This 177-nucleotide RNA was probed chemically with 2A3 and DMS. In probing experiments dimethyl sulfate is read out at A N1 and C N3, which are open when not base-paired. For DMS, 1,830 sequencing reads were counted.
RNA sequence: GGGAACGACUCGAGUAGAGUCGAAAAGAUAUGGAGCCGUGUGUAGGUGCGUUCGGAAACGAACGACCCACCGCAGAUACAUAGGCUCCUAAGUCAAAAGGGACGUUAAUGUUCGCAUUAACGUCCCGUCCCGUGUCUUGUUCGCAAGACACGGGACAAAAGAAACAACAACAACAAC
Reactivity to 2A3 in 0.01 (KOAc 150mM, MgCl2 10mM, bicine 150mM(pH8.5), 24C), signal-to-noise 2, nucleotides 027 to 126: g010a000u010a000u050g000g000a030g000c000c010g030u000g000u000g020u040a110g000g030u010g030c010g000u020u000c010g000g020a030a010a000c030g000a010a000c050g060a080c080c060c000a020c010c010g130c300a020g000a050u020a010c010a010u100a260g000g020c000u000c000c000u000a000a000g020u010c020a010a020a060a220g000g000g000a000c000g000u000u010a000a000u020g010u090u140c300g000c150a010u000u000a000a000c000g000u010c000c000c000
Reactivity to DMS in 0.01 (KOAc 150mM, MgCl2 10mM, bicine 150mM(pH8.5), 24C), signal-to-noise 2, nucleotides 027 to 126: g010a020u000a020u030g000g000a020g030c000c000g000u000g000u000g010u010a000g030g050u000g000c000g010u000u000c000g020g000a010a000a020c010g010a010a010c010g020a160c200c300c040a010c000c010g040c180a190g010a000u020a030c000a000u000a100g030g020c000u000c000c000u000a000a070g000u010c000a060a070a080a220g000g000g020a020c000g000u010u000a000a010u000g030u010u020c280g010c010a030u000u000a010a000c010g000u020c010c000c010

It was measured as part of the RMDB library TTRDES.